[RMDB]
RNA sequence: GGGAACGACUCGAGUAGAGUCGAAAAGCAACGACAACGCCUAAUAACGUUUUAAAAAUCGGAUGAUAAUCCAUAAAGUAUUUAAAAAUUUCUCCAAGUAUCGCAUUAGGAACUAAACCCGCAACAAUACCCUCUGAAUAUUCGUAUUCAGAGGGUAAAAAGAAACAACAACAACAAC
Reactivity to 2A3 in 0.01 (KOAc 150mM, MgCl2 10mM, bicine 150mM(pH8.5), 24C), signal-to-noise 1, nucleotides 027 to 126: g020c030a050a010c080g120a000c010a090a030c030g070c000c010u070a080a000u100a110a050c000g040u020u020u040u170a100a230a080a020a000u090c100g000g040a030u040g010a010u150a180a020u110c030c000a070u160a060a180a020g030u110a180u080u280u170a030a100a000a020a030u040u100u070c030u080c030c010a020a020g020u040a030u090c000g000c010a040u010u010a010g000g000a010a010c000u080a060a120a070c020c000c050g020c030a040a040c000a060a200
Reactivity to DMS in 0.01 (KOAc 150mM, MgCl2 10mM, bicine 150mM(pH8.5), 24C), signal-to-noise 1, nucleotides 027 to 126: g010c120a070a080c060g000a050c040a080a100c160g020c010c010u000a110a030u020a150a200c070g000u000u010u000u000a030a040a100a220a110u010c070g010g010a090u000g020a160u020a000a120u000c010c020a090u000a050a120a120g010u000a070u010u000u000a040a030a050a120a140u000u000u000c010u000c020c030a050a110g000u000a000u000c020g000c070a010u000u000a030g000g000a010a040c140u000a060a020a110c000c000c010g020c120a030a060c110a070a230

This 177-nucleotide RNA was probed chemically with 2A3 and DMS. Conditions: 150 mM KOAc, 10 mM MgCl2 and 150 mM bicine (pH 8.5), 24 C. The DMS profile rests on 623 reads.